[RMDB]
RNA sequence: GGGAACGACUCGAGUAGAGUCGAAAAGUUCCUUUCUGUGUGGUUCUUGUGGUAGUGUUGGUUACACCAAGGAGGGUAGUGUGAUCAAUUUCUGUUACAUGCAUCAAAUGGAACUUGCUAAUGGUACCGUUGUCUGUAUGUUCGCAUACAGACAACGAAAAGAAACAACAACAACAAC
Reactivity to 2A3 in 0.01 (KOAc 150mM, MgCl2 10mM, bicine 150mM(pH8.5), 24C), signal-to-noise 3, nucleotides 027 to 126: g010u000u000c000c000u010u030u010c080u020g130u010g030u020g040g010u030u050c020u020u040g010u010g020g000u010a020g000u000g000u020u000g000g000u000u000a000c010a010c020c030a070a080g150g020a070g030g080g030u100a030g020u030g000u010g010a010u000c000a020a020u070u200u080c000u000g010u030u010a010c010a010u020g030c000a010u010c000a000a070a040u020g020g010a010a020c000u030u050g040c020u130a160a080u120g090g030u060a090c030
Reactivity to DMS in 0.01 (KOAc 150mM, MgCl2 10mM, bicine 150mM(pH8.5), 24C), signal-to-noise 2, nucleotides 027 to 126: g010u000u010c000c000u010u010u010c060u000g010u000g030u010g000g000u000u000c020u010u010g000u010g010g010u000a000g030u000g000u000u000g000g010u000u000a030c020a010c000c040a090a170g000g000a100g010g030g030u000a090g010u000g010u020g000a010u000c020a010a010u000u010u000c010u010g010u020u000a040c010a020u010g010c030a030u000c060a020a040a030u000g000g000a020a030c080u000u000g000c130u000a090a100u000g000g000u000a120c180